An RNA of 177 nucleotides, treated with DMS and 2A3 and read out base by base.
Conditions: 150 mM KOAc, 10 mM MgCl2 and 150 mM bicine (pH 8.5), 24 C.
For DMS, 8,351 sequencing reads were counted.
For 2A3 the reverse transcriptase was SuperScript II with manganese.

RNA sequence: GGGAACGACUCGAGUAGAGUCGAAAAGUUUGAGAGCUGCUGUCAACGCCAUAAAUAAUAUGAAAUUUGAAAACACAGGACACAUCAUUAUGGACAUGAGGUACGCAAUGCAGCAGCUUUACACUCAAAUAUAGUCACACUUCGGUGUGACUAUAUUAAAAGAAACAACAACAACAAC
Reactivity to DMS in 0.01 (KOAc 150mM, MgCl2 10mM, bicine 150mM(pH8.5), 24C), signal-to-noise 6, nucleotides 027 to 126: g000u010u020u010g000a100g000a030g010c000u010g020c020u010g000u030c060a050a110c170g020c040c020a080u010a050a070a050u010a070a040u010a060u020g000a060a120a130u030u020u060g000a090a050a110a050c120a090c160a110g000g010a230c160a070c030a020u000c150a040u020u000a050u000g010g010a150c300a100u010g030a080g000g020u030a050c090g000c060a040a100u000g000c010a000g020c000a020g010c000u010u000u010a010c120a080c020u000c060a050
Reactivity to 2A3 in 0.01 (KOAc 150mM, MgCl2 10mM, bicine 150mM(pH8.5), 24C), signal-to-noise 3, nucleotides 027 to 126: g090u070u140u110g030a040g010a000g000c000u000g000c050u010g100u200c190a290a240c190g000c000c000a010u050a020a010a050u080a010a010u010a030u050g120a030a060a110u170u130u110g100a120a070a050a000c110a000c040a060g050g090a050c010a000c010a120u140c000a000u000u100a030u070g030g000a000c000a120u150g050a060g120g020u140a060c000g000c030a020a000u130g000c000a000g000c000a000g000c000u010u000u000a030c000a010c000u050c000a010
The 2A3 profile rests on 2,301 reads. The data come from the RNA Mapping Database (RMDB), library OK1LIB.